RNA sequence: GGGAACGACUCGAGUAGAGUCGAAAAGGUGAGGAGUACACAAUCUACGAUGAUGAGUGUAAGCCUGUAGCCUACCUCUACAUGCUGGCUUCAUCGUCUUGGCACCGAAAGACUCCCGGUCUUGACCGGGUCAACGCCGGUUCGCCGGCGUUGACCCAAAAGAAACAACAACAACAAC
Reactivity to 2A3 in 0.01 (KOAc 150mM, MgCl2 10mM, bicine 150mM(pH8.5), 24C), signal-to-noise 2, nucleotides 027 to 126: g000g010u030g050a080g060g060a060g160u170a030c110a010c030a120a050u000c050u040a030c100g060a050u150g020a020u000g000a010g150u110g050u090a090a000g020c000c040u030g030u030a000g000c000c040u080a090c060c010u020c000u000a010c020a030u020g010c000u050g010g040c000u020u030c010a020u010c010g030u030c000u060u090g090g000c030a060c010c030g050a110a050a000g020a040c000u020c000c040c020g010g030u030c050u080u070g100a080c000c030
Reactivity to DMS in 0.01 (KOAc 150mM, MgCl2 10mM, bicine 150mM(pH8.5), 24C), signal-to-noise 1, nucleotides 027 to 126: g000g070u000g000a130g050g000a010g000u010a010c080a150c050a210a000u000c210u000a100c300g020a010u000g000a000u000g000a000g100u000g000u000a210a030g020c000c010u000g020u030a030g000c130c090u000a060c130c170u000c020u000a080c070a000u110g010c000u020g000g030c000u000u000c000a040u000c000g040u000c000u030u000g030g030c020a080c000c000g010a130a190a070g000a030c080u000c000c000c010g000g000u000c080u000u010g000a230c030c100